[RMDB]
RNA sequence: GGGAACGACUCGAGUAGAGUCGAAAAGAUAUGGAAGGCAGGUAUGGAGCUUAGCUCGGAAACGAGCUAGAGCGUUGAAAUAUAUUGGCCUUCCUAAGUCAAAUGCGUUAAGCUUCGGCUUAACGCAGAUCUGCGUGUAGUUCGCUACACGCAGAUCAAAAGAAACAACAACAACAAC
Reactivity to 2A3 in 0.01 (KOAc 150mM, MgCl2 10mM, bicine 150mM(pH8.5), 24C), signal-to-noise 3, nucleotides 027 to 126: g020a000u020a010u060g000g000a000a000g010g000c020a010g070g000u070a030u160g300g200a120g040c010u000u010a000g000c000u010c010g010g000a010a000a000c010g010a000g030c030u010a030g110a020g070c020g040u130u260g180a060a200a020u300a000u010a010u050u050g060g000c000c000u000u010c000c000u000a000a000g020u020c000a010a150a150u110g000c010g010u020u000a010a010g020c040u030u160c300g130g000c010u010u000a000a000c010g000c000a010
Reactivity to DMS in 0.01 (KOAc 150mM, MgCl2 10mM, bicine 150mM(pH8.5), 24C), signal-to-noise 2, nucleotides 027 to 126: g000a010u010a120u010g010g000a040a000g000g010c000a020g000g010u000a000u000g040g000a270g010c010u000u010a010g010c000u010c000g000g000a030a020a100c000g020a000g000c010u000a030g000a020g020c000g030u010u010g010a090a170a080u040a040u000a010u000u030g010g000c010c000u000u000c000c000u000a000a020g000u000c020a050a160a230u010g000c000g020u040u000a010a000g000c010u010u020c300g030g000c000u000u000a000a000c000g010c000a010